Structure probing data (2A3 and DMS) for a 207-nucleotide construct. For 2A3 the reverse transcriptase was SuperScript II with manganese. It was measured as part of the RMDB library PDB130. DMS adducts were read by reverse transcription with MarathonRT. The RNA was probed in 150 mM KOAc, 10 mM MgCl2 and 150 mM bicine (pH 8.5) at 24 C.
[RMDB]
RNA sequence: GGGAACGACUCGAGUAGAGUCGAAAAUCACAAUACUUUCGAGUAUUGUGAAAAUCCUUGUUAGCUCAGUUGGUAGAGCGUUCGGCUUUUAACCGAAAUGUCAGGGGUUCGAGCCCCCUAUGAGGAGCCAAAAGCAUUACAAGUUCGCUUGUAAUGCGCCCUGUAAAAUGUUCGCAUUUUACAGGGCAAAAGAAACAACAACAACAAC
Reactivity to 2A3 in 0.01 (KOAc 150mM, MgCl2 10mM, bicine 150mM(pH8.5), 24C), signal-to-noise 4, nucleotides 027 to 156: u020c000a000c000a000a000u000a000c000u040u060u120c150g020a000g000u000a000u000u000g000u000g010a020a010a000a000u010c000c000u000u020g020u020u020a010g010c010u000c010a060g020u220u130g270g230u180a000g020a010g000c000g000u000u010c000g010g000c040u160u160u150u300a070a060c010c000g000a030a030a040u060g030u070c020a010g000g000g000g000u000u020c000g000a010g010c020c000c000c000c000u000a010u030g010a010g020g000a000g010c010c000a060a130a000a010g020c000a000u030u030a000c000a010a000g010u020u060c180g120c110u000u000g000u000a000a000u000g000c010
Reactivity to DMS in 0.01 (KOAc 150mM, MgCl2 10mM, bicine 150mM(pH8.5), 24C), signal-to-noise 3, nucleotides 027 to 156: u010c010a030c000a000a020u000a000c010u000u010u010c240g020a020g030u000a000u000u020g020u000g000a000a030a090a100u000c000c020u000u000g010u000u000a120g030c010u000c030a100g010u000u000g030g030u000a070g000a060g020c010g020u000u000c000g030g010c000u000u000u020u000a070a060c000c000g000a000a060a040u010g020u000c040a060g010g020g000g010u000u000c050g020a300g000c020c010c010c000c000u000a020u000g000a070g000g010a080g010c020c040a020a040a120a210g010c000a000u000u000a000c000a010a020g030u000u000c300g000c010u000u010g000u000a000a000u000g010c000